[RMDB]
RNA sequence: GGGAACGACUCGAGUAGAGUCGAAAAGAUAUGGAAAUCGUAACAUCGGGAGCCUGUUCGGUCGGAAACGACCGGUAGGGCAUCGAUCGUGGAUUUCCUAAGUCGAAGGGUAAGUUCGCUUACCCAAGAAAGACGUUAUGUUCGCAUAACGUCUUUCAAAAGAAACAACAACAACAAC
Reactivity to DMS in 0.01 (KOAc 150mM, MgCl2 10mM, bicine 150mM(pH8.5), 24C), signal-to-noise 3, nucleotides 027 to 126: g000a030u000a300u000g010g000a000a020a000u000c010g020u010a170a060c110a020u000c000g000g000g010a150g030c000c000u000g000u030u010c010g010g000u000c000g010g000a070a070a200c000g000a000c010c010g000g010u010a140g010g010g000c020a040u010c010g000a010u000c160g020u000g010g010a020u000u000u000c000c000u000a020a100g000u000c010g010a160a140g010g000g000u000a010a020g010u000u010c240g000c020u000u010a010c000c000c010a070a050
Reactivity to 2A3 in 0.01 (KOAc 150mM, MgCl2 10mM, bicine 150mM(pH8.5), 24C), signal-to-noise 3, nucleotides 027 to 126: g000a020u040a020u100g000g000a020a020a010u010c050g080u290a070a020c000a020u010c000g010g000g110a210g030c010c010u090g150u300u230c000g000g010u010c020g020g020a100a100a100c000g010a000c000c010g000g000u060a020g000g000g010c000a010u020c000g010a000u020c050g030u050g020g020a000u000u020u000c000c000u010a110a010g070u020c050g050a130a120g000g010g000u010a010a000g010u040u120c230g010c180u000u010a000c000c000c000a000a010